[RMDB]
Chemical mapping of a 177-nucleotide RNA with DMS and 2A3. For DMS, 2,247 sequencing reads were counted. 2A3 adducts were read by reverse transcription with SuperScript II with manganese. The RNA was probed in 150 mM KOAc, 10 mM MgCl2 and 150 mM bicine (pH 8.5) at 24 C.
RNA sequence: GGGAACGACUCGAGUAGAGUCGAAAAGACACGACGGAGACGUCGUGUCAAAGAGUGGGAAACCACUCAAAGAGCCACAGCUUCGGCUGUGGCUCAAGGCGCGGAACCAUCCGCGGAACAAGGGGAACGUAAAUUACGGAUUCGUCCGUAAUUUACGAAAAGAAACAACAACAACAAC
Reactivity to DMS in 0.01 (KOAc 150mM, MgCl2 10mM, bicine 150mM(pH8.5), 24C), signal-to-noise 3, nucleotides 027 to 126: g010a010c000a030c010g010a020c010g010g010a290g000a240c000g040u000c000g020u020g010u010c000a040a050a120g020a030g020u030g000g000g000a190a090a200c000c000a030c000u010c010a040a090a080g010a010g020c000c000a030c000a020g020c000u000u000c260g020g050c000u000g040u000g000g040c000u000c000a000a050g030g030c030g030c000g000g000a020a210c110c070a080u000c000c000g020c010g000g000a040a070c080a030a030g000g000g020g010a150a180
Reactivity to 2A3 in 0.01 (KOAc 150mM, MgCl2 10mM, bicine 150mM(pH8.5), 24C), signal-to-noise 1, nucleotides 027 to 126: g020a000c000a010c020g000a000c000g030g000a060g050a060c000g000u000c000g000u000g010u000c000a000a000a000g000a000g000u000g000g010g000a020a070a080c000c000a010c000u000c000a020a050a010g020a010g000c010c020a000c000a010g030c010u090u120c280g110g000c010u010g000u000g000g000c000u000c000a010a000g000g000c010g010c000g000g010a030a070c030c010a100u070c000c010g010c040g040g090a010a010c030a060a040g030g010g010g000a010a030

High 2A3 reactivity points to a flexible backbone, as in loops and unpaired stretches.